[RMDB]
RNA sequence: GGGAACGACUCGAGUAGAGUCGAAAACAUGCGUUUGAGGACCAUAUACUGAAAGUAGAGCCUCUGCCUCUCCUCGUCAGAGUCGUCCGACUGGUCCUCGUCGUCCUCGUCGUCCACCACCUCCGGGACAGAAUUUAAACUUCGGUUUAAAUUCUGUAAAAGAAACAACAACAACAAC
Reactivity to 2A3 in 0.01 (KOAc 150mM, MgCl2 10mM, bicine 150mM(pH8.5), 24C), signal-to-noise 3, nucleotides 027 to 126: c040a060u200g010c040g090u090u080u200g020a020g010g020a030c000c030a020u090a020u060a250c090u070g100a100a060a050g030u050a020g030a020g060c020c060u110c100u100g030c000c000u010c010u030c010c010u030c040g100u020c040a020g030a010g060u030c030g050u000c050c010g030a040c060u050g020g000u000c000c020u010c000g020u000c010g010u000c010c000u020c010g070u010c020g030u010c000c020a040c020c010a050c030c000u020c010c020g010g010g000
Reactivity to DMS in 0.01 (KOAc 150mM, MgCl2 10mM, bicine 150mM(pH8.5), 24C), signal-to-noise 5, nucleotides 027 to 126: c080a110u010g010c130g020u010u000u010g010a030g000g010a040c010c030a050u010a180u000a130c080u000g000a090a080a070g010u010a050g010a080g010c070c110u010c090u000g010c120c020u000c020u000c030c010u000c130g010u000c080a100g000a080g000u000c030g000u000c090c060g010a080c100u000g010g010u000c000c000u010c020g000u000c020g010u000c030c010u010c040g010u000c040g020u000c020c020a090c030c020a160c040c020u000c020c040g010g000g000